[RMDB]
RNA sequence: GGGAACGACUCGAGUAGAGUCGAAAAGUGCUAUCAUGGGCAAACACAGUAGCUGACAUGCAGUGAUGUCUCCAUUCUGUCUUCCCUGACAAGUCCAGAGAAGGCACUGGGUUGGCAUCCAACAGCUGGUGGAGAGGGCAUUCGUGCCCUCUCCACCAAAAGAAACAACAACAACAAC
Reactivity to 2A3 in 0.01 (KOAc 150mM, MgCl2 10mM, bicine 150mM(pH8.5), 24C), signal-to-noise 1, nucleotides 027 to 126: g000u010g000c000u070a040u230c060a110u230g050g040g020c100a160a000a110c100a030c100a070g040u140a030g000c060u000g110a020c020a130u190g180c000a000g050u050g260a020u000g030u010c000u000c000c000a000u300u000c000u020g010u000c000u000u000c000c000c000u000g000a000c050a240a000g010u010c070c000a000g000a000g000a000a000g000g000c000a000c020u000g000g020g160u150u280g010g000c010a010u000c000c000a000a000c000a020g040c050u000
An RNA of 177 nucleotides, treated with 2A3 and read out base by base. Conditions: 150 mM KOAc, 10 mM MgCl2 and 150 mM bicine (pH 8.5), 24 C. Source: RMDB library RFM100, as collected in RNAgym.